[RMDB]
RNA sequence: GGGAACGACUCGAGUAGAGUCGAAAACGUCGCCCCCUCCACCCCGCGGAUUCCGGUCUCGACCGGUAGCCGUAUUGGGCGGGGACGGGCGGCGGUCCGGUGCUGAAGCCGGCGACAGUUGCCCGAGGAAUGCUUCAAACUUCGGUUUGAAGCAUUCAAAAGAAACAACAACAACAAC
Reactivity to 2A3 in 0.01 (KOAc 150mM, MgCl2 10mM, bicine 150mM(pH8.5), 24C), signal-to-noise 3, nucleotides 027 to 126: c000g010u010c000g000c010c000c000c010c000u000c000c000a030c000c010c000c030g010c010g020g000a020u060u040c000c000g000g010u020c030u090c150g210a090c000c000g010g000u000a000g050c000c000g020u040a170u060u270g000g000g000c020g000g000g000g030a020c030g010g000g010c010g000g000c000g000g020u000c000c000g000g020u130g060c140u260g090a110a040g010c010c000g020g060c010g070a030c030a070g040u090u130g160c000c000c000g000a030g150
Reactivity to DMS in 0.01 (KOAc 150mM, MgCl2 10mM, bicine 150mM(pH8.5), 24C), signal-to-noise 2, nucleotides 027 to 126: c000g040u000c030g020c010c000c000c020c000u000c010c010a060c000c000c000c300g040c000g000g000a080u000u000c020c000g060g000u010c080u070c300g010a020c020c020g030g000u000a000g020c000c000g000u000a080u040u050g000g000g000c240g000g010g000g010a030c300g010g000g000c050g000g000c000g010g000u010c010c060g020g000u000g000c120u000g020a140a200g000c020c000g000g030c070g010a080c110a160g010u010u000g000c000c000c000g110a200g010